[RMDB]
An RNA of 177 nucleotides, treated with 2A3 and DMS and read out base by base. For 2A3, 1,241 sequencing reads were counted. The reactions ran in a buffer of 150 mM KOAc, 10 mM MgCl2 and 150 mM bicine (pH 8.5), at 24 C. Values are in units of 0.01, from 0 to 300, in steps of 10. Source: RMDB library OK1LIB, as collected in RNAgym.
RNA sequence: GGGAACGACUCGAGUAGAGUCGAAAAGAAAUAAACGUGCGAGGACGGGCGACUCGCGUGGAAAUAAAACUGUCGAAAAUAAGCCCGGAAGACAGGAAAGAAAGAAAGGGAGGGACCGACCGAAAGAGGGAUACUAAUUCUUCGGAAUUAGUAUCCCAAAAGAAACAACAACAACAAC
Reactivity to 2A3 in 0.01 (KOAc 150mM, MgCl2 10mM, bicine 150mM(pH8.5), 24C), signal-to-noise 2, nucleotides 027 to 126: g030a010a080a080u260a080a070a000c000g060u000g000c000g020a000g010g010a030c040g060g020g040c060g020a080c050u000c010g000c040g000u040g060g090a010a160a020u300a010a150a040a000c040u040g020u030c040g100a080a060a000a170u130a070a080g000c000c000c060g000g010a000a010g000a000c010a000g020g020a100a000a000g040a020a040a010g080a050a070a010g050g020g010a060g000g030g010a020c010c040g000a030c010c090g000a000a090a000g040a050
Reactivity to DMS in 0.01 (KOAc 150mM, MgCl2 10mM, bicine 150mM(pH8.5), 24C), signal-to-noise 2, nucleotides 027 to 126: g000a070a040a050u000a000a090a080c110g000u040g010c010g000a070g030g000a100c010g000g000g020c030g000a070c010u000c030g000c000g050u000g000g000a040a070a210u030a050a040a110a070c040u000g000u000c000g000a120a070a130a170u010a150a140g020c040c000c000g000g010a060a060g010a040c010a030g000g000a060a070a140g020a060a070a060g010a040a040a040g000g000g000a060g000g000g010a100c080c030g020a050c040c040g000a020a060a090g010a180